[RMDB]
RNA sequence: GGGAACGACUCGAGUAGAGUCGAAAAGAUAUGGAGAACUUGCUAACGUUCCAUGGCAGCGCGAAACUCCGUGUCGGAAACGACAUUGGAGGAGCUGCAUGGAACGUUAGCAAGUUCUCCUAAGUCAGAUGGUUAUUGUGUUCGCACAAUAACCAUCAAAAGAAACAACAACAACAAC
Reactivity to DMS in 0.01 (KOAc 150mM, MgCl2 10mM, bicine 150mM(pH8.5), 24C), signal-to-noise 1, nucleotides 027 to 126: g000a090u010a300u000g010g000a020g030a000a030c000u000u010g000c010u000a000a050c000g000u000u000c000c000a020u000g030g020c000a010g030c010g030c270g020a200a110a290c000u030c000c000g000u000g000u000c000g000g010a120a060a260c000g010a010c030a030u000u010g020g010a020g000g000a070g010c000u010g000c020a010u000g000g000a000a000c000g010u010u010a010g010c000a000a000g000u000u000c000u000c010c000u000a020a040g020u000c060a100